An RNA of 177 nucleotides, treated with 2A3 and DMS and read out base by base. The reactions ran in a buffer of 150 mM KOAc, 10 mM MgCl2 and 150 mM bicine (pH 8.5), at 24 C. 2A3 adducts were read by reverse transcription with SuperScript II with manganese.

RNA sequence: GGGAACGACUCGAGUAGAGUCGAAAAGCUUGCGAGUUCGCUCGCAAGCAAAAGUCAGAAAGAUCAAAAAGAUCAAUAAAGCGACUGACACGCAAAAUAUUAAAACUAUUCCCUUCGGGGAAUAGAACAUAUAAGGGGAGUUCGCUCCCCUUAUAUGAAAAGAAACAACAACAACAAC
Reactivity to 2A3 in 0.01 (KOAc 150mM, MgCl2 10mM, bicine 150mM(pH8.5), 24C), signal-to-noise 1, nucleotides 027 to 126: g000c000u000u000g010c000g070a000g010u050u050c180g100c080u010c000g000c000a000a000g000c000a000a070a000a000g000u000c000a000g140a190a220a000g000a000u000c010a010a090a300a240a000g010a040u000c020a030a110u220a220a180a040g010c020g150a240c040u030g030a000c010a000c040g020c030a080a020a100a100u120a190u030u300a050a020a050a120c010u010a000u010u020c000c020c000u000u000c300g080g000g000g000a000a000u000a010g000a000a000
Reactivity to DMS in 0.01 (KOAc 150mM, MgCl2 10mM, bicine 150mM(pH8.5), 24C), signal-to-noise 2, nucleotides 027 to 126: g010c000u010u000g010c000g000a000g020u000u010c210g040c020u010c000g040c020a010a010g010c020a040a070a050a160g020u010c000a020g010a140a160a150g000a010u000c010a040a160a110a150a230g000a000u000c000a070a130u010a030a120a220g000c130g030a090c010u000g030a030c010a300c040g000c090a080a030a170a090u020a070u010u010a050a070a120a150c010u000a000u000u000c000c000c000u010u000c230g010g030g010g000a000a020u000a020g000a120a140